[RMDB]
RNA sequence: GGGAACGACUCGAGUAGAGUCGAAAAGAGACCUGGUCGUUUUCAUUUACACACAGACAAUAAAAUAAUUAAAAUAAAUUUCAUUUCGAUGGGAUAAAAGAAACAACAACAACAAC
Reactivity to DMS in 0.01 (KOAc 150mM, MgCl2 10mM, bicine 150mM(pH8.5), 24C), signal-to-noise 3, nucleotides 027 to 095: g010a170g000a090c030c010u010g000g000u000c020g020u000u000u000u000c010a120u020u020u000a020c060a060c050a060c080a050g010a070c040a040a070u040a060a040a070a080u040a080a060u020u020a050a060a090a100u010a060a060a080u020u010u010c040a050u000u000u000c060g010a040u010g010g000g000a060u010a000
Reactivity to 2A3 in 0.01 (KOAc 150mM, MgCl2 10mM, bicine 150mM(pH8.5), 24C), signal-to-noise 2, nucleotides 027 to 095: g130a000g000a020c020c010u030g000g020u010c010g000u020u000u000u000c020a040u040u080u100a050c050a000c000a000c020a030g100a030c050a030a120u210a180a120a100a020u290a010a060u160u210a100a080a020a080u180a050a060a050u020u060u030c010a020u000u030u000c030g030a010u020g010g010g000a000u030a040
Description
Source: RMDB library P50LIB, as collected in RNAgym. This 115-nucleotide RNA was probed chemically with DMS and 2A3.